An RNA of 177 nucleotides, treated with 2A3 and DMS and read out base by base. The reactions ran in a buffer of 150 mM KOAc, 10 mM MgCl2 and 150 mM bicine (pH 8.5), at 24 C.
RNA sequence: GGGAACGACUCGAGUAGAGUCGAAAAUUACAAUCGAAGCGGACGCCGUUCGAACCAUUCGUCAGGUCGGUGAUCACUUUGGACGACUCGAUGUGUUGGUUAAUUGCGUCGGGACGAGCGACCGAGGGUCUUCGAAGUUGUUCGCAACUUCGAAGACAAAAGAAACAACAACAACAAC
Reactivity to 2A3 in 0.01 (KOAc 150mM, MgCl2 10mM, bicine 150mM(pH8.5), 24C), signal-to-noise 1, nucleotides 027 to 126: u090u050a040c030a030a110u090c040g170a040a000g140c010g050g020a010c010g010c010c010g000u000u030c020g060a000a020c000c020a040u100u000c000g010u000c020a030g030g050u010c040g090g080u180g100a110u130c000a090c300u130u160u130g110g040a020c000g000a000c000u040c000g020a010u060g070u030g010u020u100g030g020u030u090a110a070u080u080g040c060g100u080c000g000g020g000a010c020g020a030g120c000g010a000c020c010g000a070g070g070
Reactivity to DMS in 0.01 (KOAc 150mM, MgCl2 10mM, bicine 150mM(pH8.5), 24C), signal-to-noise 2, nucleotides 027 to 126: u000u020a130c220a130a100u020c040g030a080a090g040c040g030g000a070c020g000c030c040g000u050u010c080g010a010a030c010c010a030u000u000c010g010u000c030a040g010g000u010c020g020g020u000g000a190u030c090a070c190u000u020u000g050g000a120c020g010a030c000u000c040g000a020u000g000u000g010u020u000g010g010u000u000a060a100u010u000g020c050g020u000c050g000g010g010a180c040g000a150g000c130g000a100c020c010g000a080g040g000